[RMDB]
RNA sequence: GGGAACGACUCGAGUAGAGUCGAAAAUAGGUUCAAAAGCAUAUGGUUCAUUAUCAAUUGUCGUACAAUACUAUACAGAGACUAGUAAAGUAUUAACGGUACCUAAAUCUGUAUUUAUGCCACCACCUCGGUGUCCGGUAUUCGUACCGGACACCGAAAAAGAAACAACAACAACAAC
Reactivity to 2A3 in 0.01 (KOAc 150mM, MgCl2 10mM, bicine 150mM(pH8.5), 24C), signal-to-noise 1, nucleotides 027 to 126: u020a000g000g130u160u120c030a000a150a000a000g030c070a090u150a170u260g100g000u040u010c020a030u000u110a000u030c020a000a170u130u090g140u050c030g030u020a040c050a040a000u110a100c000u020a000u000a090c080a040g190a000g050a160c060u050a060g140u050a100a100a100g000u020a050u100u020a000a070c130g020g000u000a000c000c000u000a010a010a000u000c050u000g040u040a040u000u080u050a000u030g070c000c010a000c000c000a050c000c000